[RMDB]
Conditions: 150 mM KOAc, 10 mM MgCl2 and 150 mM bicine (pH 8.5), 24 C. This 177-nucleotide RNA was probed chemically with DMS and 2A3. The 2A3 profile rests on 1,223 reads. The DMS profile rests on 717 reads.
RNA sequence: GGGAACGACUCGAGUAGAGUCGAAAAGAGUAGUAGUUCGCUACUACUCAAAGGCACAAAAGGCACAGUUCUAAAGUGCAUGGAACACGCCAACUGCCCGUGAAAGUAAAUCCUUCGGGAUUUACAAGUACGUUACGGGUUUCGACCCGUAACGUACAAAAGAAACAACAACAACAAC
Reactivity to DMS in 0.01 (KOAc 150mM, MgCl2 10mM, bicine 150mM(pH8.5), 24C), signal-to-noise 1, nucleotides 027 to 126: g010a000g020u010a000g010u000a010g030u000u010c270g010c000u000a020c020u000a000c000u010c000a020a150a020g000g000c020a130c140a030a070a050a140g060g000c030a110c040a050g010u020u000c160u000a050a100a180g010u010g000c100a080u020g000g000a020a070c060a090c230g000c000c000a050a110c200u000g000c010c000c050g000u010g000a020a120a060g000u000a000a020a000u000c000c000u000u010c220g000g000g000a000u000u000u000a000c000a060a040
Reactivity to 2A3 in 0.01 (KOAc 150mM, MgCl2 10mM, bicine 150mM(pH8.5), 24C), signal-to-noise 1, nucleotides 027 to 126: g000a000g000u000a000g010u000a000g000u000u030c180g000c080u010a000c000u000a000c000u010c000a000a000a000g010g000c030a030c070a110a070a060a100g000g000c010a020c040a120g050u170u100c060u210a200a150a060g120u050g050c010a000u070g050g020a080a030c080a020c120g010c010c010a050a040c060u080g010c000c000c060g020u060g110a140a010a000g000u000a000a000a010u020c000c000u030u090c240g060g000g000a000u000u010u010a010c000a030a010